[RMDB]
RNA sequence: GGGAACGACUCGAGUAGAGUCGAAAAUUAAUUAGAUGGGACUGAUAUGCUGAAAGCCCUAGUUUAGGAAGAGAAGCAAGUCCAGUGUCAUUUACAGGACGGAUCAAAGGAAGAAAGUUUGGGGAAGGUUAUACGGGGACUUCGGUCCCCGUAUAACAAAAGAAACAACAACAACAAC
Reactivity to DMS in 0.01 (KOAc 150mM, MgCl2 10mM, bicine 150mM(pH8.5), 24C), signal-to-noise 1, nucleotides 027 to 126: u010u000a040a190u010u010a070g010a050u000g000g000g020a020c030u000g020a090u010a140u000g000c020u000g010a130a140a090g010c010c000c010u020a090g000u000u020u000a060g000g020a100a060g020a090g020a190a060g000c020a040a300g000u000c070c000a020g020u010g000u010c000a050u000u000u000a070c260a100g040g000a000c060g010g000a010u000c060a050a070a060g000g020a110a020g020a020a060a070g000u000u000u000g010g020g020g010a040a040g000